Conditions: 150 mM KOAc, 10 mM MgCl2 and 150 mM bicine (pH 8.5), 24 C. Chemical mapping of a 177-nucleotide RNA with DMS and 2A3.

RNA sequence: GGGAACGACUCGAGUAGAGUCGAAAAUUUGCAGUUGGGUUGGUUAUUCCAACUACUCUUCACCUUCAUAUGAUAUUUCUUAGGGGAAUGUUAACUCUAGGAUGUACCCUUUAUAUCGUCUGGGCCAAGCACUCUCAAUAUUCGUAUUGAGAGUGCUAAAAGAAACAACAACAACAAC
Reactivity to DMS in 0.01 (KOAc 150mM, MgCl2 10mM, bicine 150mM(pH8.5), 24C), signal-to-noise 2, nucleotides 027 to 126: u020u020u010g020c060a070g010u000u000g000g010g030u000u000g000g020u060u100a050u030u020c000c030a010a040c020u010a060c100u000c060u010u010c110a040c040c010u000u010c140a040u020a070u020g010a050u000a040u020u020u000c010u000u010a000g000g000g000g000a110a060u000g030u000u000a110a170c010u000c010u000a010g000g000a000u020g000u030a060c000c050c030u010u000u040a020u000a120u000c020g010u010c020u000g000g000g020c080c050a090
Reactivity to 2A3 in 0.01 (KOAc 150mM, MgCl2 10mM, bicine 150mM(pH8.5), 24C), signal-to-noise 4, nucleotides 027 to 126: u110u090u190g050c050a040g000u070u060g030g010g000u020u020g030g060u100u180a080u280u130c000c000a010a000c010u030a090c020u020c030u100u050c030a070c040c000u080u140c100a050u070a080u230g080a040u050a070u100u080u000c020u020u030a010g000g010g000g060a090a050u140g090u220u210a080a060c020u000c030u020a010g000g020a020u060g020u070a070c000c030c000u010u090u070a130u040a030u120c030g010u000c040u010g000g000g040c020c010a020
High DMS reactivity at an A or C suggests that its Watson-Crick edge is free. The DMS profile rests on 2,790 reads.